[RMDB]
RNA sequence: GGGAACGACUCGAGUAGAGUCGAAAAUGGGGCGACACCCCUCCAUAAGGCUGACUCAGAGCGGUUAGCCGCCGGUGAGUUGCAUUCACUAUGCAGAAACCGCAACGUGAUUUUAUGGGACACGAAAGGGAUGCUGAAGCUUCGGUUUUAGCAUCCCAAAAGAAACAACAACAACAAC
Reactivity to DMS in 0.01 (KOAc 150mM, MgCl2 10mM, bicine 150mM(pH8.5), 24C), signal-to-noise 9, nucleotides 027 to 126: u020g010g000g000g010c110g010a160c210a160c010c000c020c010u000c000c010a030u010a030a050g000g010c040u010g000a040c000u000c030a150g020a300g010c050g010g000u000u020a080g000c020c020g000c060c100g000g000u000g010a080g030u020u020g010c100a100u030u000c100a050c100u010a160u020g000c000a050g010a080a130a050c090c030g010c070a050a150c150g000u000g000a060u010u020u010u010a030u010g000g000g010a110c120a060c090g010a070a090a110
Reactivity to 2A3 in 0.01 (KOAc 150mM, MgCl2 10mM, bicine 150mM(pH8.5), 24C), signal-to-noise 9, nucleotides 027 to 126: u070g000g000g000g010c070g060a020c020a080c030c010c000c000u010c000c010a030u060a070a050g050g010c030u030g030a010c000u010c080a080g050a040g210c070g020g000u010u020a020g030c000c000g010c010c010g030g010u040g030a140g040u110u050g020c010a010u050u090c050a030c130u120a040u070g000c000a010g080a090a050a010c020c010g010c050a060a060c030g020u020g040a060u000u040u040u030a070u100g030g000g030a030c030a010c090g070a100a040a070
The record gives the reactivity of an RNA of 177 nucleotides to DMS and 2A3.
For 2A3 the reverse transcriptase was SuperScript II with manganese.
Conditions: 150 mM KOAc, 10 mM MgCl2 and 150 mM bicine (pH 8.5), 24 C.
Values cover nucleotides 27 to 126.